The record gives the reactivity of an RNA of 177 nucleotides to DMS and 2A3. Source: RMDB library TTRDES, as collected in RNAgym. Conditions: 150 mM KOAc, 10 mM MgCl2 and 150 mM bicine (pH 8.5), 24 C.
RNA sequence: GGGAACGACUCGAGUAGAGUCGAAAAGAUAUGGACUCACCUACUUCAACAGCGUCCGGUCGGAAACGACCGUGACGACAUGAAGGGGUGAGUCCUAAGUCAAAAGCUUGUACUUCGGUACAAGCAACUUUCCCAAUGUCUUCGGACAUUGGGAAAGAAAAGAAACAACAACAACAAC
Reactivity to DMS in 0.01 (KOAc 150mM, MgCl2 10mM, bicine 150mM(pH8.5), 24C), signal-to-noise 2, nucleotides 027 to 126: g010a030u020a220u030g010g000a030c000u000c000a020c000c000u000a190c000u030u010c000a070a120c250a150g000c030g010u010c000c030g000g000u000c010g020g000a040a040a080c000g000a000c010c000g020u010g000a000c000g000a050c080a300u020g010a040a010g010g010g010g000u000g000a040g010u000c000c020u020a000a070g000u020c010a150a190a090a200g010c010u010u000g010u000a030c020u000u020c230g020g050u000a000c000a000a000g010c010a030a010
Reactivity to 2A3 in 0.01 (KOAc 150mM, MgCl2 10mM, bicine 150mM(pH8.5), 24C), signal-to-noise 2, nucleotides 027 to 126: g000a030u030a010u140g000g020a010c000u080c000a000c010c010u300a300c010u300u070c080a300a130c050a240g070c010g000u020c020c030g000g020u020c020g000g050a000a070a000c030g040a000c010c010g000u080g030a000c000g050a010c010a280u300g040a000a010g000g040g010g000u000g000a000g000u000c000c000u000a000a000g020u000c010a050a000a020a110g020c000u000u000g000u000a010c000u060u160c300g160g000u000a000c020a000a010g030c000a000a000